The data come from the RNA Mapping Database (RMDB), library M2RFPK. An RNA of 207 nucleotides, treated with DMS and 2A3 and read out base by base. Values are in units of 0.01, from 0 to 300, in steps of 10. The 2A3 profile rests on 12,393 reads.
[RMDB]
RNA sequence: GGGAACGACUCGAGUAGAGUCGAAAAAUGUGCGGCAAAGAAACAUUGUUUAUGCAAAGGCACUUCACAAUGUGUGCUCAAACAUUGCUUAUUCAAACACGCUUCACAAUGUGCGACAAAGAAACAUAAAACGUUUAGUACUUCGGUACUAAACGAAGUAACGUUACAUGUUCGCAUGUAACGUUACAAAAGAAACAACAACAACAAC
Reactivity to DMS in 0.01 (KOAc 150mM, MgCl2 10mM, bicine 150mM(pH8.5), 24C), signal-to-noise 4, nucleotides 027 to 156: a070u000g020u000g000c060g010g000c090a080a110a110g010a140a040a030c010a040u010u000g010u000u010u000a070u010g010c060a070a110a120g010g010c000a020c020u000u000c140a100c080a150a080u000g020u000g010u000g020c020u000c060a060a090a060c030a040u000u000g000c030u000u000a130u000u000c060a120a150a080c050a070c050g000c080u000u000c070a090c080a110a100u010g020u000g030c030g030a150c060a060a120a110g000a120a110a040c060a050u000a050a020a080a160c010g020u000u000u000a020g020u000a000c000u000u000c280g030g000u000a000c000u000a010a000a000c000g010a000a080
Reactivity to 2A3 in 0.01 (KOAc 150mM, MgCl2 10mM, bicine 150mM(pH8.5), 24C), signal-to-noise 9, nucleotides 027 to 156: a000u060g010u030g030c020g020g010c050a060a080a130g090a070a160a020c030a050u010u050g020u020u060u030a060u070g030c030a070a080a080g100g000c010a010c000u110u100c100a030c070a170a140u150g040u010g010u010g050c020u060c130a080a100a030c030a060u030u040g000c020u090u080a070u110u090c020a010a050a030c070a020c120g010c010u050u040c030a020c030a070a100u130g040u070g090c030g070a030c050a020a100a020g100a050a110a010c050a030u150a100a020a020a010c000g000u000u000u010a000g000u000a000c000u010u040c220g060g000u000a000c000u000a000a000a000c000g000a010a000